[RMDB]
Structure probing data (2A3 and DMS) for a 177-nucleotide construct. 2A3 adducts were read by reverse transcription with SuperScript II with manganese. DMS adducts were read by reverse transcription with MarathonRT. The 2A3 profile rests on 9,048 reads. It was measured as part of the RMDB library OK1LIB.
RNA sequence: GGGAACGACUCGAGUAGAGUCGAAAAUGGUGCGGCAAACCAAGCAGCGGGCGGCGGUCAUGGAGGUGCUGCGCAGCGCGCGCUCGCACCCCGACGCGGCGCAGGUCCACGCCCAGGUGCGUGAGCACUCAGGUAGCUACUUCGGUAGCUACCUGAGAAAAGAAACAACAACAACAAC
Reactivity to 2A3 in 0.01 (KOAc 150mM, MgCl2 10mM, bicine 150mM(pH8.5), 24C), signal-to-noise 5, nucleotides 027 to 126: u130g030g010u060g010c030g020g020c030a040a040a070c020c010a040a030g030c040a020g040c030g020g050g040c020g030g060c030g000g040u070c070a170u230g060g010a140g020g040u030g000c010u030g000c010g000c020a090g150c110g020c040g010c000g000c080u040c090g010c000a010c000c000c000c000g010a040c040g000c010g080g020c020g000c010a010g020g030u010c020c000a010c030g010c000c030c020a070g070g040u100g020c030g010u050g030a030g020c020a010
Reactivity to DMS in 0.01 (KOAc 150mM, MgCl2 10mM, bicine 150mM(pH8.5), 24C), signal-to-noise 4, nucleotides 027 to 126: u020g010g010u000g000c040g000g010c070a090a090a100c030c050a090a110g010c060a040g010c070g010g010g010c020g010g020c060g000g000u020c070a090u040g000g000a090g000g010u010g000c010u000g000c000g010c010a130g030c130g010c190g010c000g000c010u010c170g010c000a020c010c000c030c020g000a070c060g020c020g010g000c010g000c030a070g000g000u010c040c010a060c080g010c020c000c080a120g020g020u020g010c020g000u020g000a130g000c060a200